RNA sequence: GGGAACGACUCGAGUAGAGUCGAAAAGAUAUGGAAGAGUUCGACAUGACCUAUAUCUCGGAAACGAGAUUAAGGUCAACAGCGAGACUCUUCCUAAGUCAAAGGCUGUCCGUUCGCGGACAGCCAACCAUCUAACCUUGUUCGCAAGGUUAGAUGGAAAAGAAACAACAACAACAAC
Reactivity to 2A3 in 0.01 (KOAc 150mM, MgCl2 10mM, bicine 150mM(pH8.5), 24C), signal-to-noise 2, nucleotides 027 to 126: g000a000u040a010u080g000g010a010a000g000a010g000u020u020c010g050a060c170a300u300g010a000c000c010u050a030u020a010u190c010u000c000g000g030a040a030a030c010g010a000g020a010u020u020a060a020g010g000u000c000a000a010c020a010g030c000g000a080g100a070c000u000c000u000u000c000c000u000a030a000g010u000c020a030a030a160g000g000c010u010g010u000c010c010g050u070u090c300g000c000g060g030a010c020a000g000c000c000a000a000
Reactivity to DMS in 0.01 (KOAc 150mM, MgCl2 10mM, bicine 150mM(pH8.5), 24C), signal-to-noise 4, nucleotides 027 to 126: g000a020u000a230u020g000g010a010a010g010a020g000u000u000c000g030a050c060a300u000g010a010c000c000u000a200u000a010u000c000u000c000g010g000a030a040a060c000g010a020g010a010u000u000a080a030g030g000u000c000a040a050c230a110g010c010g000a070g010a020c000u000c000u000u000c000c000u000a010a060g010u000c030a120a170a110g010g000c000u000g010u000c000c000g010u000u010c250g020c020g010g020a010c000a000g010c000c000a010a030